[RMDB]
RNA sequence: GGGAACGACUCGAGUAGAGUCGAAAAGAGCAUGGGCGUAAAGACGGGCUCCGAGCGCGCCCCGGAGCCGUCCAUGUAAAUCAGUAGCUCCCCCUUGCGGAGGGUGCGCACCCGUCCCAGGGACUGGGUGCUUCGAGCGUUUCGACGCUCGAAGCACAAAAGAAACAACAACAACAAC
Reactivity to 2A3 in 0.01 (KOAc 150mM, MgCl2 10mM, bicine 150mM(pH8.5), 24C), signal-to-noise 3, nucleotides 027 to 126: g050a000g010c010a010u000g010g030g010c070g140u270a030a140a070g170a060c090g050g080g000c000u000c020c010g020a060g030c020g020c010g000c030c000c000c000g000g000a000g030c000c000g000u000c000c000a020u040g010u080a040a110a060u110c040a020g090u070a040g020c050u050c010c010c000c000c010u090u140g070c040g070g080a050g000g020g000u020g020c010g000c000a040c020c010c010g050u030c030c000c050a080g060g000g000a010c060u080g010g000
Reactivity to DMS in 0.01 (KOAc 150mM, MgCl2 10mM, bicine 150mM(pH8.5), 24C), signal-to-noise 2, nucleotides 027 to 126: g030a210g000c010a050u000g000g030g010c010g050u060a030a130a120g040a200c140g030g000g010c010u000c000c000g010a090g020c070g000c080g000c030c030c050c000g000g010a020g040c010c000g010u000c000c020a030u000g000u030a030a030a110u040c100a050g000u000a090g000c000u020c000c040c000c070c020u000u000g000c240g010g000a150g000g010g020u000g030c000g000c000a060c000c020c000g020u000c000c000c070a180g000g000g000a020c010u040g000g000
An RNA of 177 nucleotides, treated with 2A3 and DMS and read out base by base. Values cover nucleotides 27 to 126. The reactions ran in a buffer of 150 mM KOAc, 10 mM MgCl2 and 150 mM bicine (pH 8.5), at 24 C.